Background:
Source: RMDB library M2RFPK, as collected in RNAgym. The record gives the reactivity of an RNA of 207 nucleotides to DMS and 2A3. The reactions ran in a buffer of 150 mM KOAc, 10 mM MgCl2 and 150 mM bicine (pH 8.5), at 24 C. Reactivities are rounded to 0.1 and cut off at 0 and 3. For 2A3, 2,561 sequencing reads were counted.
[RMDB]
RNA sequence: GGGAACGACUCGAGUAGAGUCGAAAAGUUAUGCUCUCGCUGCCUAAUGGCGGUGCGGGAAACCCACCCUAAAGUCCUUAGGGUUAGCCCCUUAAGGCGGGGUUCGGAGGCACCUGGCAACAGAAGCUGAAACUGUGCACAUUCGUGUGCACAGUAAACAUUCAUACCAGUUCGCUGGUAUGAAUGUAAAAGAAACAACAACAACAAC
Reactivity to DMS in 0.01 (KOAc 150mM, MgCl2 10mM, bicine 150mM(pH8.5), 24C), signal-to-noise 2, nucleotides 027 to 156: g020u000u000a140u000g020c030u000c000u000c010g030c010u000g000c000c010u020a140a190u010g020g000c030g030g080u000g000c060g010g010g020a050a030a100c000c010c040a150c030c000c010u000a080a070a180g000u000c070c030u000u010a040g000g000g020u000u010a050g000c120c180c010c010u000u000a010a020g040g050c040g000g020g030g020u000u010c030g010g000a300g050g030c040a060c050c000u000g000g010c000a060a140c050a080g000a050a100g020c030u020g000a090a090a060c010u010g010u000g000c000a030c000a090u000u030c300g030u000g040u000g000c010a000c000a000g010u000a010a120
Reactivity to 2A3 in 0.01 (KOAc 150mM, MgCl2 10mM, bicine 150mM(pH8.5), 24C), signal-to-noise 4, nucleotides 027 to 156: g050u070u070a130u300g050c000u000c000u000c030g000c010u020g000c000c020u300a300a200u270g010g000c030g010g050u030g010c010g000g010g010a030a000a050c000c020c020a090c010c000c020u140a110a110a100g300u020c000c000u010u010a000g000g000g000u010u020a010g030c000c000c000c040u010u050a010a000g010g010c000g010g000g000g020u000u110c100g060g020a040g010g000c000a000c010c000u040g220g010c000a010a010c000a020g020a000a000g020c000u010g000a100a020a000c000u000g000u020g010c000a000c000a000u020u110c230g080u060g000u000g000c000a000c000a000g000u000a000a010